[RMDB]
RNA sequence: GGGAACGACUCGAGUAGAGUCGAAAAGAAUGUAUGUAAACCGUGUGAAAAACGAUGGCUAUUCAGGAAUCGUUCUGAGGGAACAGGUAAAAUGGAAGAAAGCCAAAUCCUUAGCAUACGGAAGAAAAAUAUAAUGAUGGUUCGCCAUCAUUAUAUUAAAAGAAACAACAACAACAAC
Reactivity to 2A3 in 0.01 (KOAc 150mM, MgCl2 10mM, bicine 150mM(pH8.5), 24C), signal-to-noise 9, nucleotides 027 to 126: g120a070a040u150g020u150a070u060g060u090a070a040a020c000c000g000u000g000u000g060a180a070a020a000a000c010g000a020u030g140g010c040u100a120u190u210c100a030g030g070a040a030u020c000g000u030u000c020u030g060a060g020g060g010a050a050c030a050g020g010u070a110a160a060a020u110g100g020a050a040g040a120a090a010g010c000c000a010a070a050u050c010c000u020u020a010g020c000a000u010a010c010g010g030a040a040g080a020a110a010
Reactivity to DMS in 0.01 (KOAc 150mM, MgCl2 10mM, bicine 150mM(pH8.5), 24C), signal-to-noise 9, nucleotides 027 to 126: g010a100a090u030g010u020a040u000g020u010a080a120a110c010c000g010u000g020u010g010a100a080a070a090a030c100g000a050u000g000g010c040u000a120u020u040c160a070g020g000a160a020u010c010g020u000u000c010u010g010a070g010g000g010a060a070c160a150g010g020u010a020a050a090a100u020g020g010a090a090g010a100a090a130g010c000c000a020a080a080u030c020c030u000u000a030g000c020a010u000a010c000g010g010a070a090g020a030a050a060
Description:
Structure probing data (2A3 and DMS) for a 177-nucleotide construct. The 2A3 profile rests on 16,191 reads. The reactions ran in a buffer of 150 mM KOAc, 10 mM MgCl2 and 150 mM bicine (pH 8.5), at 24 C. It was measured as part of the RMDB library OK1LIB.